[RMDB]
RNA sequence: GGGAACGACUCGAGUAGAGUCGAAAAACCGCGAGGAGGUGGAGAUGCCAUGCCGACCCGAAGAGGAAAGAAGGACGCGAGACGCGAACCUGUGAGUGGAAACCCGCUUUAUUCACUGGGGACGACAACACCAUGAUGUUCGCAUCAUGGAAAAGAAACAACAACAACAAC
Reactivity to DMS in 0.01 (KOAc 150mM, MgCl2 10mM, bicine 150mM(pH8.5), 24C), signal-to-noise 9, nucleotides 027 to 129: a070c010c000g020c060g020a070g000g000a050g010g010u020g010g000a070g000a070u030g020c090c040a050u020g000c030c010g000a080c030c020c050g030a040a040g000a070g020g010a020a020a020g000a070a000g020g000a090c080g030c100g030a090g000a090c060g000c020g010a060a100c000c000u040g030u010g000a050g040u020g000g020a040a090a130c000c000c010g050c110u010u000u020a030u000u000c090a050c020u040g000g010g030g030a070c080g000a070c070a060a070c160a120
Reactivity to 2A3 in 0.01 (KOAc 150mM, MgCl2 10mM, bicine 150mM(pH8.5), 24C), signal-to-noise 9, nucleotides 027 to 129: a010c010c000g010c040g010a030g020g000a010g000g030u080g030g020a080g020a050u130g040c030c010a050u090g020c000c010g020a030c000c010c020g020a040a020g030a010g020g010a040a020a020g010a010a010g020g010a000c020g030c040g050a100g010a030c060g010c030g040a040a070c010c010u030g020u040g030a030g010u040g010g010a050a050a050c010c010c010g020c020u090u120u080a130u090u090c050a030c090u030g010g010g000g030a020c030g030a030c030a080a010c020a050